Structure probing data (2A3) for a 207-nucleotide construct. The 2A3 profile rests on 494 reads. 2A3 adducts were read by reverse transcription with SuperScript II with manganese. It was measured as part of the RMDB library OK3TST. The reactions ran in a buffer of 150 mM KOAc, 10 mM MgCl2 and 150 mM bicine (pH 8.5), at 24 C.
RNA sequence: GGGAACGACUCGAGUAGAGUCGAAAAAGCGUGAAACCAGAUUACUCGUUCGAGAAUCAGUUGAAGUCUCUUGAACAUGAGGCCAACGUCAUUGCCAACUAUACGUAUGCGGAGAUGACCAUUCAGCAUGCCGCGUCGCAAUCUAAAAAACUGCUAGCCAACCCAUACCUUUCGAGGUAUGGGUUGGAAAAGAAACAACAACAACAAC
Reactivity to 2A3 in 0.01 (KOAc 150mM, MgCl2 10mM, bicine 150mM(pH8.5), 24C), signal-to-noise 1, nucleotides 027 to 156: a000g050c060g010u050g010a110a010a000c060c000a010g000a050u020u270a260c020u020c010g170u300u120c100g000a000g030a020a000u040c030a020g020u060u060g030a130a050g080u000c030u000c000u080u140g000a080a010c060a020u240g000a000g000g030c000c000a000a000c000g040u030c030a060u000u080g000c040c030a010a010c050u070a060u030a170c070g060u110a010u030g000c000g000g020a090g010a070u020g040a130c020c010a020u110u110c060a050g030c030a000u010g060c000c000g000c030g020u000c010g000c070a070a020u120c040u300a000a000a000a000a060a060c030u140g010c040u160a060g030